[RMDB]
The record gives the reactivity of an RNA of 207 nucleotides to DMS and 2A3. For DMS the reverse transcriptase was MarathonRT. Values cover nucleotides 27 to 156. 2A3 adducts were read by reverse transcription with SuperScript II with manganese.
RNA sequence: GGGAACGACUCGAGUAGAGUCGAAAACUGCAAAGUACCCUCAGAAGGGAGGCGAAAUAGAGCACAGCGAUAGUCGGGUGAGAACCCCGACGGCCUAAUGGAUAAGGGUUCCUCAGCACUGCUGAUCAGCUGAGGGUUAGCCGGUCCUAAGUCAUACCGUAAUGAUGCUCUUCGGAGCAUCAUUACGAAAAGAAACAACAACAACAAC
Reactivity to DMS in 0.01 (KOAc 150mM, MgCl2 10mM, bicine 150mM(pH8.5), 24C), signal-to-noise 1, nucleotides 027 to 156: c080u000g010c080a080a090a130g010u010a090c060c010c000u000c030a180g000a180a230g000g030g020a040g000g000c100g010a240a120a060u000a150g010a100g000c040a060c080a090g020c060g010a150u000a080g030u000c040g040g000g050u000g000a220g010a160a060c000c020c010c010g020a000c000g000g000c050c040u000a090a060u020g030g010a050u000a050a120g000g020g020u000u010c000c000u010c010a000g020c010a100c130u000g050c040u000g020a120u010c050a200g030c030u010g010a020g040g000g000u000u000a060g010c000c010g020g020u000c010c010u000a120a020g020u030c020a200u010a070c080
Reactivity to 2A3 in 0.01 (KOAc 150mM, MgCl2 10mM, bicine 150mM(pH8.5), 24C), signal-to-noise 2, nucleotides 027 to 156: c040u040g000c020a060a000a060g030u020a020c020c010c000u020c050a160g060a220a040g090g040g030a020g010g000c040g070a030a000a070u160a080g060a010g050c030a010c010a060g070c040g070a010u090a040g000u000c000g000g000g020u020g010a060g020a050a070c000c010c000c000g000a000c030g000g000c010c010u170a180a050u110g010g010a020u030a070a190g030g000g000u040u020c000c000u000c000a000g030c030a030c080u200g050c040u130g040a180u160c080a020g020c020u000g010a000g050g020g040u030u130a010g010c040c010g030g000u000c000c000u020a060a010g050u020c020a040u050a120c040